Background
An RNA of 207 nucleotides, treated with DMS and 2A3 and read out base by base. 2A3 adducts were read by reverse transcription with SuperScript II with manganese. Values are in units of 0.01, from 0 to 300, in steps of 10. The 2A3 profile rests on 3,038 reads. DMS adducts were read by reverse transcription with MarathonRT.
RNA sequence: GGGAACGACUCGAGUAGAGUCGAAAAGGGGUCCGUGCCGAGCGAUGGAUUAAAGGCAACAGCUAUCUGAAGCCUCCACGGAUAGACAUGCCUGACCAUCGCGUUUGACGCACGGACGGAGGCACCCAAAAGAGAUGGUGGUUCGCCACCAUCUCAACAUAGGCGACAUGUUCGCAUGUCGCCUAUGAAAAGAAACAACAACAACAAC
Reactivity to DMS in 0.01 (KOAc 150mM, MgCl2 10mM, bicine 150mM(pH8.5), 24C), signal-to-noise 2, nucleotides 027 to 156: g030g020g020g040u000c020c000g040u000g010c000c040g050a050g010c000g020a040u000g000g000a300u010u010a040a110a060g020g030c030a110a180c100a090g000c010u000a010u010c000u000g030a020a120g000c010c000u000c000c020a280c030g000g000a020u010a040g000a060c050a190u000g000c000c000u010g020a180c000c000a010u010c000g010c000g020u000u010u020g020a150c300g000c020a010c000g000g040a010c000g040g020a000g050g040c010a270c130c090c020a050a040a070a080g000a050g000a020u000g020g050u000g020g010u000u020c180g030c010c000a010c010c000a000u000c000u000c020a020a040
Reactivity to 2A3 in 0.01 (KOAc 150mM, MgCl2 10mM, bicine 150mM(pH8.5), 24C), signal-to-noise 3, nucleotides 027 to 156: g090g010g080g000u000c010c000g000u000g000c010c020g040a000g010c020g000a010u000g010g020a060u130u300a300a300a050g030g000c090a160a070c030a140g020c010u000a000u000c000u030g050a150a010g000c020c010u000c000c000a010c000g000g000a000u000a000g030a020c170a150u300g020c000c000u020g030a030c010c030a020u010c010g000c010g000u000u040u050g000a000c000g000c000a000c000g010g000a010c000g010g000a000g000g000c000a040c000c010c000a020a070a040a000g000a000g000a000u000g000g000u010g010g040u060u090c250g050c030c000a000c000c010a000u040c010u000c000a000a000